[RMDB]
The record gives the reactivity of an RNA of 177 nucleotides to DMS. Conditions: 150 mM KOAc, 10 mM MgCl2 and 150 mM bicine (pH 8.5), 24 C. The data come from the RNA Mapping Database (RMDB), library OK2TST.

RNA sequence: GGGAACGACUCGAGUAGAGUCGAAAAUAUAGAGGAUUUACGGCCAUUUAAGGCUGACGAUUUUAUUGAGGCUCUUUUUGCCCGAGAGGAUUAAUACGGAUGAUUCGCUUUGAACAGGUCAGUAAAGAUGUCAGCUGAGAUUCGUCUCAGCUGACAUAAAAGAAACAACAACAACAAC
Reactivity to DMS in 0.01 (KOAc 150mM, MgCl2 10mM, bicine 150mM(pH8.5), 24C), signal-to-noise 1, nucleotides 027 to 126: u010a130u000a070g000a130g000g000a140u000u000u000a110c030g010g010c010c000a270u000u000u010a060a080g000g000c000u010g020a020c240g000a080u020u000u010u010a050u000u000g000a090g010g010c050u000c010u000u000u000u000u000g010c060c000c060g010a040g000a070g000g000a070u000u000a030a050u030a040c300g000g010a050u000g000a160u000u000c080g010c040u000u000u000g000a050a110c060a140g010g010u010c000a080g010u000a040a090a100g010